Structure probing data (2A3 and DMS) for a 207-nucleotide construct. For 2A3 the reverse transcriptase was SuperScript II with manganese. The 2A3 profile rests on 1,372 reads.
RNA sequence: GGGAACGACUCGAGUAGAGUCGAAAAUUCCAUUUGAGUAUCCUGGAAACGGGCUUUUCAGCAUGGAACGUACAUAUUAAAUAGUAGGAGUGCAUAGUGGCCCGUAUAGCAGGCAUUAACAUUCCUGAAAACGUGAAAAGGUUCGCCUUUUCACGAACCUGUACUAUGACUUCGGUCAUAGUACAGGAAAAGAAACAACAACAACAAC
Reactivity to 2A3 in 0.01 (KOAc 150mM, MgCl2 10mM, bicine 150mM(pH8.5), 24C), signal-to-noise 2, nucleotides 027 to 156: u040u000c040c010a050u160u040u050g050a080g010u060a070u080c000c000u050g090g000a130a000a000c020g000g010g000c020u090u110u090u150c070a010g010c000a000u040g010g130a270a030c020g080u120a010c010a050u140a100u130u300a160a220a200u210a140g030u010a010g000g090a090g020u010g000c050a070u100a120g150u040g040g010c000c000c000g010u030a020u020a040g030c010a000g000g010c000a010u000u020a040a070c010a070u080u130c000c000u030g080a120a000a020a000c010g000u000g000a000a000a000a010g010g000u010u050c110g110c000c000u000u000u000u000c000a010c000g000a000a000
Reactivity to DMS in 0.01 (KOAc 150mM, MgCl2 10mM, bicine 150mM(pH8.5), 24C), signal-to-noise 1, nucleotides 027 to 156: u000u000c010c000a120u000u000u000g000a140g030u010a150u000c030c000u000g000g010a040a160a040c000g030g050g040c080u000u000u000u000c030a240g000c030a070u000g000g010a140a100c020g050u000a220c080a130u000a080u000u000a120a090a090u000a080g030u010a150g000g000a200g010u030g000c010a100u000a130g020u020g010g010c000c000c000g020u000a080u000a070g000c030a030g010g000c080a130u000u000a090a070c020a140u000u000c030c030u030g000a080a080a110a150c010g020u010g000a020a000a020a000g030g020u000u010c300g030c030c010u000u010u010u010c000a010c000g000a010a100
For DMS the reverse transcriptase was MarathonRT. Values cover nucleotides 27 to 156.